[RMDB]
RNA sequence: GGGAACGACUCGAGUAGAGUCGAAAAGAUCAAUAUAUCAUUCAAGUUUCUGCCCUAUCAGCUUGAUGGUAGUGUAUUGGCCUACCAUGGCGUUAACGGGUAACGGAGAAUUAGGGUUCGAUUCCGGAUUUUUUCUAUGGUUCGCCAUAGAAAAAAUAAAAGAAACAACAACAACAAC
Reactivity to DMS in 0.01 (KOAc 150mM, MgCl2 10mM, bicine 150mM(pH8.5), 24C), signal-to-noise 6, nucleotides 027 to 126: g010a050u020c070a070a090u020a090u020a070u010c050a070u010u010c060a090a120g000u000u010u010c070u010g010c010c010c010u000a090u020c180a110g000c020u000u020g000a020u000g000g010u010a020g010u030g030u020a090u020u020g000g010c060c010u010a040c010c010a040u000g010g020c020g000u010u010a060a140c180g000g000g000u020a030a090c040g000g000a120g010a080a070u020u020a070g000g000g000u000u000c080g010a160u020u000c010c020g020g010
Reactivity to 2A3 in 0.01 (KOAc 150mM, MgCl2 10mM, bicine 150mM(pH8.5), 24C), signal-to-noise 8, nucleotides 027 to 126: g040a050u080c070a100a050u130a070u070a030u210c060a100u120u130c060a120a000g010u000u060u000c020u050g010c000c000c000u020a050u070c060a050g010c010u060u130g160a020u010g040g020u020a010g010u040g050u210a250u150u210g230g050c000c000u000a000c000c000a010u030g000g000c010g010u030u060a070a050c050g000g000g010u010a040a030c020g050g030a030g070a070a090u110u110a080g090g090g000u050u080c030g040a080u070u020c000c000g010g030

Notes
This 177-nucleotide RNA was probed chemically with DMS and 2A3. The reactions ran in a buffer of 150 mM KOAc, 10 mM MgCl2 and 150 mM bicine (pH 8.5), at 24 C. The data come from the RNA Mapping Database (RMDB), libraries RFM100 and RFMREP.